Source: RMDB library OK3TST, as collected in RNAgym. An RNA of 207 nucleotides, treated with 2A3 and read out base by base. Values are in units of 0.01, from 0 to 300, in steps of 10. Conditions: 150 mM KOAc, 10 mM MgCl2 and 150 mM bicine (pH 8.5), 24 C.

[RMDB]
RNA sequence: GGGAACGACUCGAGUAGAGUCGAAAAUACCGCCGCCAUGGGGAAGCGGGUGGCGAUCGGGUUGUCUUUCGGGGCAUAGUUCAUGCGCUCGAACAGGCACGCCAGGACCCUGGCGGGCGUCAGGGGAACACAGGCGCCCCUGUUGGCGACGAGCGACAGGCUUGUCAAGAUUCGUCUUGACAAGCCUAAAAGAAACAACAACAACAAC
Reactivity to 2A3 in 0.01 (KOAc 150mM, MgCl2 10mM, bicine 150mM(pH8.5), 24C), signal-to-noise 2, nucleotides 027 to 156: u110a040c050c030g010c020c010g000c000c040a020u110g000g040g000g050a050a020g010c030g000g000g000u000g000g030c080g080a100u130c050g030g060g010u030u070g010u000c020u020u050u000c000g000g010g000g150c000a030u050a030g100u100u140c060a010u060g000c170g260c000u000c000g010a010a000c030a050g000g060c010a000c010g080c000c000a010g070g020a090c010c000c000u030g000g010c170g030g090g050c030g000u020c000a000g020g000g000g050a110a000c030a000c010a080g160g040c010g010c000c020c000c010u050g070u200u070g050g020c000g000a050c060g060a050g060c060g040a040c040